[RMDB]
RNA sequence: GGGAACGACUCGAGUAGAGUCGAAAAGGAGGAAAGCAAAGAAAGCCACGGGGCUAGCGAGUGGAUGUUCCGCCCCAAGGGGAGCCGAGUGAGGCUUAUCCCGGGGAACUCGGUAAUUCGCCCCGAAACCCAGCGCGCUUCGGCGCGCUGAAAAGAAACAACAACAACAAC
Reactivity to DMS in 0.01 (KOAc 150mM, MgCl2 10mM, bicine 150mM(pH8.5), 24C), signal-to-noise 2, nucleotides 027 to 129: g000g000a130g030g090a090a050a000g020c060a020a030a020g020a000a060a080g070c020c050a150c110g000g030g030g070c040u030a150g040c060g060a040g070u030g000g060a050u050g000u040u040c060c090g030c060c030c020c000a010a120g000g000g050g000a020g010c030c000g010a170g010u100g000a110g000g020c020u060u000a080u120c000c020c020g050g000g000g060a130a000c040u020c080g000g000u030a100a070u070u040c000g000c000c030c020c000g010a000a060a030c030c000
Reactivity to 2A3 in 0.01 (KOAc 150mM, MgCl2 10mM, bicine 150mM(pH8.5), 24C), signal-to-noise 2, nucleotides 027 to 129: g060g010a050g000g070a070a000a000g020c090a000a000a120g030a130a020a000g050c000c020a060c030g000g000g000g030c000u020a040g020c000g020a000g000u080g020g110a060u090g040u130u080c000c020g080c030c000c020c000a220a210g000g000g000g000a000g000c010c010g000a090g180u240g100a130g000g000c020u000u010a090u120c010c000c000g000g000g000g000a010a010c000u050c000g000g000u040a110a140u190u120c100g000c000c000c000c010g000a000a000a000c020c010